[RMDB]
RNA sequence: GGGAACGACUCGAGUAGAGUCGAAAAGGGUUUGAGCCAUCGCCCGAAUAUGAUGGUUGAUACAAGUCGGCAUUGUACGCGACGUAGUACGUACUCAUUAGUGCGAAAGCACGGUUAGUCCGACUGGGCAGGGACGAUCUUCUGUCAAUACUUAGAAGAUAGUCAGUACUUUCGAGUACUGACUAUCAAAAGAAACAACAACAACAAC
Reactivity to 2A3 in 0.01 (KOAc 150mM, MgCl2 10mM, bicine 150mM(pH8.5), 24C), signal-to-noise 5, nucleotides 027 to 156: g020g010g020u040u070u110g050a010g010c010c000a010u000c010g020c050c030c040g060a100a080u200a120u150g010a010u010g010g010u020u050g040a040u050a160c080a020a030g010u020c010g010g000c050a060u050u180g040u070a010c020g020c070g050a050c070g030u020a020g030u040a030c010g000u010a000c010u040c060a070u070u120a070g000u000g000c020g040a090a020a010g000c010a010c000g000g030u050u040a030g020u010c000c000g000a000c010u020g000g020g000c080a110g020g030g000a030c080g070a130u030c000u100u020c020u100g070u030c000a070a050u170a160c060u090u060a040g030a120a000
Reactivity to DMS in 0.01 (KOAc 150mM, MgCl2 10mM, bicine 150mM(pH8.5), 24C), signal-to-noise 4, nucleotides 027 to 156: g010g020g000u000u000u000g020a130g020c000c030a050u000c030g000c060c040c070g020a090a120u010a060u000g010a050u010g020g010u000u000g010a150u000a060c110a060a040g010u010c000g010g020c050a250u000u000g010u000a030c000g020c030g020a160c110g030u000a130g040u000a020c020g010u000a010c010u000c200a080u000u000a080g030u000g020c000g000a120a100a190g010c000a010c000g000g020u010u000a110g000u000c020c010g000a060c010u000g010g010g030c080a080g010g000g030a090c080g010a090u010c060u000u030c030u010g010u010c030a050a110u000a090c040u010u010a130g010a150a260
Conditions: 150 mM KOAc, 10 mM MgCl2 and 150 mM bicine (pH 8.5), 24 C.
Structure probing data (2A3 and DMS) for a 207-nucleotide construct.
It was measured as part of the RMDB library OK3TST.
For DMS the reverse transcriptase was MarathonRT.